[RMDB]
Background:
An RNA of 207 nucleotides, treated with 2A3 and DMS and read out base by base. The RNA was probed in 150 mM KOAc, 10 mM MgCl2 and 150 mM bicine (pH 8.5) at 24 C. The data come from the RNA Mapping Database (RMDB), library OK3TST.
RNA sequence: GGGAACGACUCGAGUAGAGUCGAAAAAGAUCACACGGGUAAAGUGCCAUUCUCAUCACAUCGUAUCAAGGGUACAUACUAUGAAAAUGACAUCACUAUCGAUAUUAGCCAUGAUCACCUGACUUGAGGUAAUGCUUAUCAGGUUUUUCCAGUGUAAUCCCUCUAAAUGCUUCGGCAUUUAGAGGGAAAAAGAAACAACAACAACAAC
Reactivity to 2A3 in 0.01 (KOAc 150mM, MgCl2 10mM, bicine 150mM(pH8.5), 24C), signal-to-noise 3, nucleotides 027 to 156: a000g060a030u120c040a030c020a020c160g010g000g040u070a100a050a060g050u060g070c030c010a050u090u050c050u010c060a090u060c010a010c040a100u050c080g070u070a020u080c070a040a210g130g010g000u080a050c030a090u050a010c020u050a030u140g070a000a120a040a000u030g000a020c000a000u030c010a030c040u070a060u060c100g060a020u020a070u110u070a040g000c010c010a030u060g010a040u160c000a020c010c000u030g040a060c030u040u080g020a000g000g000u030a030a010u050g020c000u030u030a040u190c040a020g020g000u010u010u000u060u030c000c010a030g010u000g010u060a040a080
Reactivity to DMS in 0.01 (KOAc 150mM, MgCl2 10mM, bicine 150mM(pH8.5), 24C), signal-to-noise 2, nucleotides 027 to 156: a080g000a090u000c050a000c070a110c000g010g010g000u020a050a080a150g030u000g010c000c010a100u010u010c040u000c010a070u010c080a080c050a090u010c150g040u010a070u010c060a050a220g000g030g020u000a050c070a110u000a030c070u000a090u000g010a010a040a050a100u000g000a030c010a050u010c010a060c030u000a060u000c070g010a100u000a110u010u010a040g020c040c030a100u000g030a090u010c040a040c050c000u000g000a030c040u010u030g010a100g080g050u000a060a090u020g020c020u000u010a100u000c050a080g000g000u040u010u030u000u000c030c000a110g030u000g030u010a090a240